[RMDB]
RNA sequence: GGGAACGACUCGAGUAGAGUCGAAAAGGCAAGCGCGACCGCGUCUUCCACGGGCGUCGAUGGCGGAAUAGCGGCGACGUAUGCGGUCGCCUCGCAAUGGGAUGGUGGCUACGUGGCCAAUUACACGGGAAGAUUACAGGUUCGCCUGUAAUCUUCCAAAAGAAACAACAACAACAAC
Reactivity to 2A3 in 0.01 (KOAc 150mM, MgCl2 10mM, bicine 150mM(pH8.5), 24C), signal-to-noise 3, nucleotides 027 to 126: g110g000c020a020a020g000c030g000c000g110a000c000c020g000c000g030u000c070u190u010c060c030a060c010g060g060g050c020g000u000c010g040a070u060g150g060c050g130g080a210a130u170a120g050c000g030g000c000g020a000c010g040u050a100u260g000c000g000g000u000c000g000c000c010u000c010g050c040a030a120u190g060g000g050a120u080g040g080u030g020g000c020u030a070c060g060u120g010g000c040c000a070a150u180u100a060c080a020c050g060
Reactivity to DMS in 0.01 (KOAc 150mM, MgCl2 10mM, bicine 150mM(pH8.5), 24C), signal-to-noise 2, nucleotides 027 to 126: g010g010c020a070a020g000c220g010c010g000a020c010c000g010c010g030u000c190u000u010c070c170a080c110g000g030g010c000g000u000c010g020a050u010g000g000c020g000g000a090a100u000a100g010c020g010g000c050g030a020c000g000u000a040u000g020c000g000g000u000c000g000c010c020u000c030g010c040a090a070u030g000g000g020a090u000g010g010u000g020g020c030u020a140c130g000u000g000g010c040c050a050a090u010u020a070c110a020c080g010